An RNA of 177 nucleotides, treated with DMS and 2A3 and read out base by base.
Conditions: 150 mM KOAc, 10 mM MgCl2 and 150 mM bicine (pH 8.5), 24 C.
For 2A3, 2,319 sequencing reads were counted.
2A3 adducts were read by reverse transcription with SuperScript II with manganese.
Values cover nucleotides 27 to 126.
As a SHAPE reagent, 2A3 marks flexible, mostly unpaired nucleotides at the ribose 2'-OH.
[RMDB]
RNA sequence: GGGAACGACUCGAGUAGAGUCGAAAAGAUAGUUCGUUCGCGAACUAUCAAACGCGUCGGCGAAGCUAGCGAAUAGCUGAGAAAUGAGCCGAAAACAAACAAAAAGAACGGCCUUCGGGCCGUUCAACGAUUUAAGAGUGUUCGCACUCUUAAAUCGAAAAGAAACAACAACAACAAC
Reactivity to DMS in 0.01 (KOAc 150mM, MgCl2 10mM, bicine 150mM(pH8.5), 24C), signal-to-noise 3, nucleotides 027 to 126: g000a010u020a000g010u000u000c000g010u000u030c190g040c010g000a000a000c000u000a000u020c000a020a110a150c110g000c190g010u000c010g000g020c000g000a220a030g010c000u000a010g010c090g020a160a110u000a070g020c010u000g000a130g020a070a110a180u000g010a300g000c000c020g000a000a030a090a110c190a100a060a070c080a070a070a080a130a090g000a030a030c000g030g000c000c000u010u000c170g040g000g030c000c000g010u000u000c000a030a100
Reactivity to 2A3 in 0.01 (KOAc 150mM, MgCl2 10mM, bicine 150mM(pH8.5), 24C), signal-to-noise 2, nucleotides 027 to 126: g000a010u020a000g000u000u000c010g000u020u060c160g010c010g110a000a000c000u000a010u030c000a030a020a000c070g020c080g120u020c010g020g030c010g030a030a000g010c000u020a030g000c020g140a250a140u100a110g000c000u040g040a030g070a070a240a080u130g020a020g000c000c010g050a090a010a010a040c040a000a110a010c040a030a120a000a030a070g010a000a000c010g000g000c020c000u050u110c140g020g000g000c000c000g000u000u010c000a000a010